Structure probing data (2A3 and DMS) for a 177-nucleotide construct. The RNA was probed in 150 mM KOAc, 10 mM MgCl2 and 150 mM bicine (pH 8.5) at 24 C.
RNA sequence: GGGAACGACUCGAGUAGAGUCGAAAAGAUAUGGAAUCUGAGGACUUUUGACGAGCUGCACUCGGAAACGAGUGGCAGCUCGAUAAGUCCCAGAUUCCUAAGUCAAAGUUUCACUUCGGUGAAACAAUCUCCUAUACCAGUUCGCUGGUAUAGGAGAAAAAGAAACAACAACAACAAC
Reactivity to 2A3 in 0.01 (KOAc 150mM, MgCl2 10mM, bicine 150mM(pH8.5), 24C), signal-to-noise 2, nucleotides 027 to 126: g040a010u060a040u100g000g000a030a000u000c000u010g080a300g120g000a000c030u070u080u290u300g300a220c120g000a000g050c000u000g000c000a000c010u020c020g040g010a040a080a030c020g000a000g020u010g030g060c020a000g020c000u020c000g000a000u000a010a000g000u000c000c000c000a000g020a000u000u000c000c000u000a020a010g000u000c020a110a040a150g010u010u000u020c010a030c020u050u160c300g180g020u030g000a000a000a000c000a000a160
Reactivity to DMS in 0.01 (KOAc 150mM, MgCl2 10mM, bicine 150mM(pH8.5), 24C), signal-to-noise 2, nucleotides 027 to 126: g000a030u010a300u010g000g020a020a000u000c020u020g000a230g020g010a030c000u010u010u000u010g020a300c120g000a000g000c010u000g000c010a080c000u000c010g010g010a060a100a190c010g000a020g010u000g010g050c010a000g020c000u000c000g020a010u000a000a020g010u000c000c000c010a010g010a010u000u000c000c000u020a010a070g020u000c020a120a220a140g000u010u000u000c000a000c010u000u020c230g010g040u010g000a000a000a000c010a120a160
Source: RMDB library TTRDES, as collected in RNAgym.